Chemical mapping of a 207-nucleotide RNA with 2A3. Source: RMDB library RNAMAK, as collected in RNAgym. The 2A3 profile rests on 1,040 reads.
[RMDB]
RNA sequence: GGGAACGACUCGAGUAGAGUCGAAAAGGGGUCACGGUUGUCAGAUCAUGAUCCCAGGCUUGGAUUUACAGGCUGAAGCCUCCACGGCCUGUUGUCAGCCUGGGAUGAUCUUGGAUUUACCGUGACGGAGGCACCCAAAGCCUUGUUCGCAAGGCAACAGGACACUAUCCUUCGGGAUAGUGUCCUGAAAAGAAACAACAACAACAAC
Reactivity to 2A3 in 0.01 (KOAc 150mM, MgCl2 10mM, bicine 150mM(pH8.5), 24C), signal-to-noise 1, nucleotides 027 to 156: g130g000g010g000u010c000a000c000g000g000u030u010g080u050c000a010g040a100u050c010a030u250g080a070u040c000c000c000a000g010g000c010u220u300g180g030a140u300u120u160a010c000a000g030g000c000u030g030a110a030g010c020c020u000c020c000a050c020g040g000c000c000u000g070u030u020g040u060c030a030g010c000c000u000g000g000g010a010u040g000a020u020c040u020u140g050g020a060u190u140u120a100c000c000g000u030g000a000c000g000g000a000g000g010c050a100c000c020c010a030a040a020g000c000c000u020u020g040u070u100c300g000c130a000a000g000g000c010a030a010